[RMDB]
Description: Source: RMDB library M2PK50, as collected in RNAgym. Structure probing data (DMS) for a 177-nucleotide construct.
RNA sequence: GGGAACGACUCGAGUAGAGUCGAAAACCCUGGAACUUCGGUUCCAGGGCAUGGUCCAAAUCCCCCGCUGAAACGGAGCGAUAUCCGUCCCAAAAAUAUAAAAAGCUGAUGAUUUCGAUCAUCAGAAUUAGGCUAUGAUAUUCGUAUCAUAGCCUAAAAAAGAAACAACAACAACAAC
Reactivity to DMS in 0.01 (KOAc 150mM, MgCl2 10mM, bicine 150mM(pH8.5), 24C), signal-to-noise 3, nucleotides 027 to 126: c000c000c020u010g000g010a010a000c010u000u020c180g030g010u000u000c000c000a010g030g000g020c030a000u010g030g010u010c020c050a060a150a180u030c020c000c010c020c000g010c000u000g010a110a100a020c000g010g000a000g020c010g010a040u010a010u000c000c000g030u010c050c060c150a020a060a090a100a100u000a090u020a080a100a090a140a090g000c000u000g000a020u000g000a010u010u010u020c190g010a040u000c000a000u000c000a000g010a070a050
In probing experiments dimethyl sulfate is read out at A N1 and C N3, which are open when not base-paired. The DMS profile rests on 2,220 reads.